[RMDB]
RNA sequence: GGGAACGACUCGAGUAGAGUCGAAAAGUGGUACAGACCAUCUUCAUGGCGUUGUAUGCCAUCUUCGUUACUUGGCGCAUGAUGGGCAAAAACUACGAUGCGGCGGUGCUGGCUGCGGGUCAUUGUGCGUGAUGUUGCCUUUCGAGGCAACAUCACGAAAAGAAACAACAACAACAAC
Reactivity to 2A3 in 0.01 (KOAc 150mM, MgCl2 10mM, bicine 150mM(pH8.5), 24C), signal-to-noise 1, nucleotides 027 to 126: g000u010g060g030u060a110c060a050g080a070c000c010a050u030c050u170u110c090a040u060g050g000c050g070u060u070g030u040a060u100g020c010c000a020u000c040u010u010c000g090u030u020a160c100u090u300g090g000c010g000c010a050u040g030a030u060g040g020g110c040a030a000a130a050a000c050u170a020c040g080a030u060g000c010g000g040c000g080g000u060g000c000u040g070g040c010u000g000c050g000g020g000u030c020a030u070u270g040u080g080
Reactivity to DMS in 0.01 (KOAc 150mM, MgCl2 10mM, bicine 150mM(pH8.5), 24C), signal-to-noise 1, nucleotides 027 to 126: g010u000g020g030u000a080c110a120g020a080c000c010a050u010c100u010u020c120a060u000g030g030c110g030u020u010g010u020a100u010g020c030c010a010u000c020u000u000c120g060u010u000a090c180u000u010g020g010c060g000c130a010u010g000a030u010g000g010g000c060a080a040a030a000a030c070u000a060c090g010a060u000g030c120g010g030c030g010g000u000g010c050u010g010g020c020u020g020c120g000g010g010u000c040a080u000u000g010u010g000

Chemical mapping of a 177-nucleotide RNA with 2A3 and DMS. The RNA was probed in 150 mM KOAc, 10 mM MgCl2 and 150 mM bicine (pH 8.5) at 24 C. The data come from the RNA Mapping Database (RMDB), library OK2TST. For 2A3, 861 sequencing reads were counted. Values cover nucleotides 27 to 126.